[RMDB]
RNA sequence: GGGAACGACUCGAGUAGAGUCGAAAAGGCAGACAGAAAGUCUGUCCACGAAUAGCGAAUUUCGGGAGUAAAGCUGACUUAGCAAGUAGAGUCAGUUUAACCGACUAAACUAGCUAGUCAUAGCAGCAGAUACAUACAAAUUCGUUUGUAUGUAUCUAAAAGAAACAACAACAACAAC
Reactivity to DMS in 0.01 (KOAc 150mM, MgCl2 10mM, bicine 150mM(pH8.5), 24C), signal-to-noise 9, nucleotides 027 to 126: g010g000c000a010g010a010c010a160g010a140a100a140g010u000c000u000g000u000c000c080a080c120g000a050a050u000a020g000c030g000a110a220u000u000u000c060g000g000g010a160g000u010a060a050a050g010c000u000g000a010c000u000u000a090g010c160a060a100g010u020a070g000a010g000u000c000a020g000u000u010u010a070a070c040c010g000a250c100u010a020a040a030c040u000a240g000c010u000a000g000u010c050a110u030a090g010c110a070g010c190
Reactivity to 2A3 in 0.01 (KOAc 150mM, MgCl2 10mM, bicine 150mM(pH8.5), 24C), signal-to-noise 7, nucleotides 027 to 126: g000g000c000a000g000a010c010a000g210a120a120a000g000u000c000u000g000u000c000c000a040c030g030a060a040u020a010g000c020g020a010a030u010u020u010c000g010g000g010a070g070u140a040a020a000g010c000u000g000a000c000u020u000a010g030c030a090a000g040u030a020g050a000g000u000c000a000g000u000u000u010a010a010c000c000g000a000c020u040a010a030a020c010u000a010g000c000u000a000g020u030c040a050u040a060g020c020a010g010c000